[RMDB]
RNA sequence: GGGAACGACUCGAGUAGAGUCGAAAAGUUAUGGAAAACGUCUUAGCUACCACUACAACAACUAUGCUGGACGGUGAUGGUUCGACUUACUCGAAACCAUCACGUAGUGGUAGUCGUUCCCAUUCAACACAAAGUGCAUAUUCGUAUGCACUUUGUGAAAAGAAACAACAACAACAAC
Reactivity to DMS in 0.01 (KOAc 150mM, MgCl2 10mM, bicine 150mM(pH8.5), 24C), signal-to-noise 6, nucleotides 027 to 126: g010u010u000a090u000g010g020a100a080a110a080c030g000u010c020u000u010a080g020c010u000a030c020c020a020c020u000a030c050a070a060c110a040a070c150u010a060u000g020c110u000g000g000a030c070g020g040u000g010a010u000g000g010u000u000c000g010a020c250u010u010a080c210u000c000g000a030a040a040c010c000a000u000c010a020c040g000u000a020g010u000g000g010u000a020g010u000c010g000u000u000c000c000c000a140u010u010c100a070a140
Reactivity to 2A3 in 0.01 (KOAc 150mM, MgCl2 10mM, bicine 150mM(pH8.5), 24C), signal-to-noise 7, nucleotides 027 to 126: g040u080u050a080u300g140g060a080a070a020a040c020g030u010c050u130u170a050g000c000u010a010c000c030a010c030u060a020c010a120a010c000a040a040c080u170a080u300g070c060u090g080g020a020c040g020g010u000g000a010u010g000g040u010u010c010g000a030c060u130u200a080c050u070c020g010a070a020a020c010c000a000u010c000a000c020g000u030a010g010u000g000g000u000a010g000u000c000g000u000u000c000c000c000a020u080u100c060a090a070